[RMDB]
RNA sequence: GGGAACGACUCGAGUAGAGUCGAAAACUCUCUAAACGGCCGUAAUCCUAAUAGUGCCAUUUAUGCUAUGUCCUCUUAGAGCUUCCGCGAUUUAAUAUGCUACGGAUCGCGGGUGAUUUUCUAUUUAAGUUAACAAUCAUAACCUGCUCGCCCUCGGGUGUAGGUACAGGUUCGCCUGUACCUACACAAAAGAAACAACAACAACAAC
Reactivity to 2A3 in 0.01 (KOAc 150mM, MgCl2 10mM, bicine 150mM(pH8.5), 24C), signal-to-noise 1, nucleotides 027 to 156: c000u010c000u030c060u090a020a030a020c030g060g000c040c020g170u170a010a060u070c010c020u060a100a060u070a150g100u070g020c040c040a020u060u000u010a110u050g040c060u040a040u090g150u030c000c010u100c020u050u040a030g000a000g030c000u090u000c010c000g020c020g020a010u000u090u000a110a070u060a070u300g100c040u020a000c120g010g020a010u000c000g000c000g000g000g000u000g000a060u000u110u140u040c050u090a160u030u250u080a150a030g030u030u050a140a000c020a030a000u160c120a060u110a110a030c020c000u010g000c000u000c020g020c000c000c000u030c000g100g040
Record summary:
Structure probing data (2A3) for a 207-nucleotide construct. For 2A3 the reverse transcriptase was SuperScript II with manganese. It was measured as part of the RMDB library OK3TST.